[RMDB]
RNA sequence: GGGAACGACUCGAGUAGAGUCGAAAACAAUGGAGAUGAUUCUUGAGGGAAGCAAUUCUGCAGAGACAUCUCCACCCUGGGGUGGCGUCGCCAGAAUACACCGACCCGUUACAGGGAAAUUGGCUACUGAACAAGGUUUCUUCGGAAACCUUGUUCAAAAAGAAACAACAACAACAAC
Reactivity to DMS in 0.01 (KOAc 150mM, MgCl2 10mM, bicine 150mM(pH8.5), 24C), signal-to-noise 2, nucleotides 027 to 126: c170a090a220u030g030g000a000g010a010u000g000a130u060u000c020u010u010g060a200g000g000g010a020a050g020c300a110a130u000u000c000u040g010c050a300g000a000g000a010c010a050u000c000u000c000c000a020c000c000c020u010g010g030g030g100u000g000g010c240g010u000c050g000c050c080a140g000a100a150u010a120c100a100c090c010g000a100c030c000c050g000u050u050a140c040a050g000g000g000a010a050a000u020u000g000g000c040u010a110c250
Reactivity to 2A3 in 0.01 (KOAc 150mM, MgCl2 10mM, bicine 150mM(pH8.5), 24C), signal-to-noise 2, nucleotides 027 to 126: c130a010a080u110g020g000a010g000a000u020g060a170u130u000c010u020u040g020a100g040g050g030a000a040g100c050a050a290u050u020c000u110g040c090a080g000a010g000a000c000a000u000c000u020c000c000a030c000c020c000u030g030g000g000g000u050g020g020c070g010u060c020g000c000c010a050g040a090a050u180a030c010a000c010c000g070a110c020c000c010g030u080u140a070c100a060g000g000g000a050a000a060u110u030g020g000c000u040a020c060